[RMDB]
RNA sequence: GGGAACGACUCGAGUAGAGUCGAAAAGCAAAUGGUGAAGUAAAGCGCUUAUUGGUUACUUCUGAAAAGCCUGGUGCAGGUAAAAGUACAGUUGUAUCGAAUGUAGCGAUUACUUAUGCACAAGCAGUGUCCACGUCUCUUUCGAGAGACGUGGACAAAAAGAAACAACAACAACAAC
Reactivity to 2A3 in 0.01 (KOAc 150mM, MgCl2 10mM, bicine 150mM(pH8.5), 24C), signal-to-noise 1, nucleotides 027 to 126: g010c000a030a140a080u000g070g000u110g210a010a000g000u000a030a100a100g260c000g030c000u000u000a000u000u060g000g000u040u000a000c000u030u020c000u000g070a020a020a020a020g000c000c000u120g010g300u140g000c000a000g000g000u230a080a210a110a060g110u140a000c000a000g000u000u000g020u030a030u020c010g140a000a000u150g190u150a000g090c000g000a000u000u000a000c040u040u080a170u220g010c000a010c000a040a080g070c070a040g010